[RMDB]
RNA sequence: GGGAACGACUCGAGUAGAGUCGAAAAGAUAUGGAAUAGACCCAGGGAGCCACUCGGAAACGAGAAUGGCUUUGAUCUGGGUCUAUUCCUAAGUCAAAACCCGCGUUAGGUUCGCCUAACGCGGGAAGCUAAGAACUAACUUCGGUUAGUUCUUAGCAAAAGAAACAACAACAACAAC
Reactivity to DMS in 0.01 (KOAc 150mM, MgCl2 10mM, bicine 150mM(pH8.5), 24C), signal-to-noise 1, nucleotides 027 to 126: g030a020u000a220u020g000g000a020a000u000a010g020a020c000c010c000a030g010g000g000a000g020c000c000a040c000u010c000g010g000a070a050a050c000g000a010g000a130a110u010g020g000c010u000u000u000g000a090u020c000u000g010g000g010u000c000u000a000u000u010c000c000u000a000a090g000u000c020a140a070a130a130c000c010c000g010c000g000u000u000a010g000g010u000u010c240g000c010c000u000a000a000c010g020c000g010g000g000a000a010